[RMDB]
RNA sequence: GGGAACGACUCGAGUAGAGUCGAAAAGGAGGAAAGCAAAGAAAGCCACGGGGCUAGCGAGUGGAUGUUCCGCCCCAAGGGGAGCCGAGUGAGGCUUAUCCCGGGGAACUCGGUAAUUCGCCCCGAACAAAAAGAUAGUCUUCGGACUAUCUUUUUGAAAAGAAACAACAACAACAAC
Reactivity to DMS in 0.01 (KOAc 150mM, MgCl2 10mM, bicine 150mM(pH8.5), 24C), signal-to-noise 2, nucleotides 027 to 126: g020g010a040g030g000a100a060a070g010c070a090a080a100g010a090a070a130g010c070c150a150c040g030g000g010g030c040u000a060g020c040g020a030g010u000g010g030a120u010g000u000u000c020c030g000c030c010c010c020a030a110g010g000g000g000a040g020c010c000g020a140g030u000g030a180g000g020c000u000u000a060u010c000c000c030g000g000g000g000a160a060c010u000c000g010g000u010a080a150u010u010c180g000c000c000c000c010g020a050a090
Reactivity to 2A3 in 0.01 (KOAc 150mM, MgCl2 10mM, bicine 150mM(pH8.5), 24C), signal-to-noise 1, nucleotides 027 to 126: g090g010a040g020g100a150a000a000g020c030a140a000a060g070a120a110a000g100c060c000a010c010g040g000g010g000c020u030a010g080c000g010a020g020u020g050g070a090u120g100u180u090c050c020g000c000c000c000c000a080a090g020g030g000g000a000g000c000c010g020a060g180u290g050a070g020g000c000u010u000a060u080c020c010c040g010g000g000g000a000a010c010u020c020g000g060u110a110a140u110u070c050g030c000c030c000c030g000a010a000
Structure probing data (DMS and 2A3) for a 177-nucleotide construct. The RNA was probed in 150 mM KOAc, 10 mM MgCl2 and 150 mM bicine (pH 8.5) at 24 C. For DMS, 1,901 sequencing reads were counted. For 2A3 the reverse transcriptase was SuperScript II with manganese. The data come from the RNA Mapping Database (RMDB), library 15KREP.